About this RNA
Chemical mapping of a 177-nucleotide RNA with DMS. The reactions ran in a buffer of 150 mM KOAc, 10 mM MgCl2 and 150 mM bicine (pH 8.5), at 24 C. The data come from the RNA Mapping Database (RMDB), library TTRINS.
RNA sequence: GGGAACGACUCGAGUAGAGUCGAAAAGAUAUGGACUUAGGGUCAUUCGAGGUACUGGAGUUGUGAACUCGGAAACGAGUUCCAACGAUGAAAGUACUCCCCACCGAAUGACCCUAAGUCCUAAGUCCCUUCUGUCGUACUUCGGUACGACAGAAGGAAAAGAAACAACAACAACAAC
Reactivity to DMS in 0.01 (KOAc 150mM, MgCl2 10mM, bicine 150mM(pH8.5), 24C), signal-to-noise 1, nucleotides 027 to 126: g010a170u000a260u020g000g000a000c000u000u000a010g000g000g010u000c030a000u000u000c010g030a220g000g000u000a000c000u000g050g010a200g020u000u060g000u040g000a000a010c010u020c000g020g020a130a110a280c010g010a010g000u020u000c000c000a010a020c000g000a100u010g000a140a100a020g010u000a010c000u040c090c040c050c050a300c130c030g000a030a020u010g010a000c000c000c000u000a000a000g010u000c010c010u000a000a060g010u000c010